[RMDB]
RNA sequence: GGGAACGACUCGAGUAGAGUCGAAAAUAAAAGAAAUUGUAACAAUGAUGGUUAAUAAAUUAACAAAUCGAUUAUCUGAACAAAACAUAAAUAUUAUUGUUACUGAUAAAGCGAAAGACAAAAUCGCCAGGUUCUAUCCAUUCGUGGAUAGAACCUGAAAAGAAACAACAACAACAAC
Reactivity to 2A3 in 0.01 (KOAc 150mM, MgCl2 10mM, bicine 150mM(pH8.5), 24C), signal-to-noise 2, nucleotides 027 to 126: u120a000a070a000a060g110a020a030a010u190u040g000u000a040a000c000a000a000u000g000a000u030g120g000u000u040a070a000u070a120a220a010u270u090a030a020c070a060a040a020u150c010g060a100u040u230a000u080c080u160g120a030a000c050a090a140a030a000c060a020u130a020a300a000u130a000u000u000a010u000u000g000u000u000a060c000u000g030a080u190a190a050a000g030c000g050a110a000a190g170a020c050a110a160a010a120u060c000g020c000